Structure probing data (DMS and 2A3) for a 177-nucleotide construct. The data come from the RNA Mapping Database (RMDB), library OK2TRN. Conditions: 150 mM KOAc, 10 mM MgCl2 and 150 mM bicine (pH 8.5), 24 C. Values are in units of 0.01, from 0 to 300, in steps of 10. The DMS profile rests on 21,102 reads. For 2A3, 11,824 sequencing reads were counted.
RNA sequence: GGGAACGACUCGAGUAGAGUCGAAAACUUUACCUACAACCUGGUUGAUCAACUGCGCUCCAGUGGCCAUCGCGUAGUGAUAUACCGCAACCAAAUUGCGGCUGACACCAUUAUUGAGCGUUUGCAACAAGUGCAUACUAUUCGUAGUAUGCACUUGAAAAGAAACAACAACAACAAC
Reactivity to DMS in 0.01 (KOAc 150mM, MgCl2 10mM, bicine 150mM(pH8.5), 24C), signal-to-noise 9, nucleotides 027 to 126: c130u010u010u000a110c030c020u000a080c090a060a080c070c070u000g010g010u000u000g010a100u010c080a070a080c060u000g010c040g010c030u000c050c120a100g020u010g000g010c050c050a050u000c080g020c050g010u000a030g010u000g000a100u010a110u010a100c010c000g010c010a020a040c090c220a040a040a300u000u000g010c010g010g000c060u000g010a110c110a060c020c030a050u000u000a110u000u000g010a070g010c060g010u000u000u000g000c080a080a170
Reactivity to 2A3 in 0.01 (KOAc 150mM, MgCl2 10mM, bicine 150mM(pH8.5), 24C), signal-to-noise 7, nucleotides 027 to 126: c030u130u150u140a140c010c010u040a070c040a080a050c020c040u040g040g040u050u070g050a110u080c050a050a120c050u040g000c020g000c020u040c030c020a090g020u040g080g010c030c030a060u070c040g000c040g060u090a060g030u030g070a010u040a010u030a150c010c000g000c010a030a030c050c050a050a130a150u050u030g010c010g010g010c050u040g020a020c010a020c040c000a030u070u080a110u120u180g020a010g030c030g020u050u140u180g050c030a050a040